[RMDB]
RNA sequence: GGGAACGACUCGAGUAGAGUCGAAAAUUAGCCUGGUUGCUGGCGAGUACUUCCUGUUUGACAGCACCAGCUGGAGGUGCAGGAGAGGCAGGGUGCGGGUGUUGUGCUGAAACUUCGUCUUCGUACUCAUCGCCUAGAUAAUUAUCACCAAGCCCUCAAUCGUAACGUUUUUCGAAACGUUACGAUUAAAAGAAACAACAACAACAAC
Reactivity to 2A3 in 0.01 (KOAc 150mM, MgCl2 10mM, bicine 150mM(pH8.5), 24C), signal-to-noise 3, nucleotides 027 to 156: u090u030a010g050c050c020u010g010g010u070u210g020c030u000g000g040c040g020a030g000u050a110c120u130u120c060c050u070g060u070u000u040g020a020c010a000g000c000a030c010c020a020g010c020u040g060g000a080g040g020u110g000c060a020g030g080a140g010a020g000g000c000a010g000g010g000u020g000c050g010g020g020u030g030u020u030g010u010g040c170u160g090a140a040a040c020u040u080c010g110u010c030u200u120c050g010u030a020c000u010c060a160u160c060g000c000c000u010a010g000a020u070a050a090u150u140a010u090c010a010c050c010a030a070g070c000c000c000u050c040
Reactivity to DMS in 0.01 (KOAc 150mM, MgCl2 10mM, bicine 150mM(pH8.5), 24C), signal-to-noise 2, nucleotides 027 to 156: u000u000a080g010c120c010u000g000g020u000u000g040c000u010g060g010c050g040a080g010u000a060c140u000u020c110c050u010g040u000u010u010g030a090c020a070g010c000a300c040c000a040g030c030u000g000g000a080g010g010u010g020c050a170g000g010a130g020a090g010g010c050a300g000g000g020u000g030c050g020g010g030u000g000u000u010g020u000g030c040u010g010a120a140a080c060u000u000c020g020u010c020u000u000c020g000u000a040c010u020c040a060u000c120g020c020c010u030a050g000a100u000a060a170u000u000a090u000c060a090c030c020a050a150g000c000c020c000u010c020